Structure probing data (DMS and 2A3) for a 177-nucleotide construct. The reactions ran in a buffer of 150 mM KOAc, 10 mM MgCl2 and 150 mM bicine (pH 8.5), at 24 C.
[RMDB]
RNA sequence: GGGAACGACUCGAGUAGAGUCGAAAACACCUCGGAAAGGAGGUGAUGCUAUGGAGACGUUUCAGGCUCUUCAAUUAAUGUUCUUAUUUGGAAUGUUUAUUCUAGCGCUUUUAACGUUUAUCCAGAAGCUACAUAUAAAAUUCGUUUUAUAUGUAGCAAAAGAAACAACAACAACAAC
Reactivity to DMS in 0.01 (KOAc 150mM, MgCl2 10mM, bicine 150mM(pH8.5), 24C), signal-to-noise 6, nucleotides 027 to 126: c010a010c010c000u010c000g010g000a110a180a170g000g000a010g000g010u000g010a030u010g020c090u010a130u000g010g000a020g000a010c000g000u000u000u000c100a010g010g010c000u000c000u010u000c170a010a000u000u010a010a000u000g000u000u000c000u010u010a160u010u020u030g000g000a010a010u000g010u000u000u000a020u000u000c180u000a000g010c170g010c000u000u000u010u000a000a010c000g000u000u000u020a120u010c000c000a020g010a140a160
Reactivity to 2A3 in 0.01 (KOAc 150mM, MgCl2 10mM, bicine 150mM(pH8.5), 24C), signal-to-noise 9, nucleotides 027 to 126: c000a010c000c000u010c020g210g300a240a130a120g150g000a000g000g010u010g010a030u110g010c050u060a050u110g000g000a010g000a000c000g000u000u010u020c060a010g010g000c000u000c000u010u020c010a000a010u000u030a000a010u010g020u000u000c020u050u250a300u290u190u300g020g000a000a000u010g000u000u010u010a000u010u000c020u010a000g000c000g000c000u000u010u010u010a000a000c000g000u010u020u060a090u020c000c000a010g020a040a010